An RNA of 177 nucleotides, treated with 2A3 and DMS and read out base by base. The DMS profile rests on 1,294 reads. The data come from the RNA Mapping Database (RMDB), library M2PK50. For 2A3 the reverse transcriptase was SuperScript II with manganese. In probing experiments dimethyl sulfate is read out at A N1 and C N3, which are open when not base-paired.
RNA sequence: GGGAACGACUCGAGUAGAGUCGAAAACUCUGCCUCUUCGGAGGCAGAGAAACCCAGCACCGAAUCCAAUUUUCGACUCUAGCACGGACCCAAGCAAGGGAAAAACGCCCCAGUUCGCUGGGGCGAAGUUUACACAUACGUUCGCGUAUGUGUAAACAAAAGAAACAACAACAACAAC
Reactivity to 2A3 in 0.01 (KOAc 150mM, MgCl2 10mM, bicine 150mM(pH8.5), 24C), signal-to-noise 1, nucleotides 027 to 126: c000u000c020u020g000c010c000u050c020u050u020c150g110g000a000g010g000c000a000g000a000g000a000a000a000c000c000c000a000g010c040a030c020c040g100a030a050u090c030c030a050a050u040u020u010u000c020g000a000c010u020c000u030a030g110c060a020c020g000g020a020c000c000c000a040a000g080c020a020a060g050g010g090a060a120a020a030a040c010g000c010c020c000c010a010g010u050u080c150g000c110u020g010g010g020g010c000g010a000a000
Reactivity to DMS in 0.01 (KOAc 150mM, MgCl2 10mM, bicine 150mM(pH8.5), 24C), signal-to-noise 1, nucleotides 027 to 126: c000u000c000u000g000c000c000u000c000u000u010c180g030g030a030g000g020c000a000g000a000g000a010a070a130c000c010c020a090g000c060a060c020c030g000a090a110u000c040c050a060a120u010u000u000u000c000g000a000c000u000c000u000a020g020c040a090c000g000g000a300c010c000c000a110a090g000c100a070a070g000g010g000a050a040a060a070a130c000g000c000c010c000c000a010g020u000u020c140g010c010u000g000g000g030g010c020g000a000a020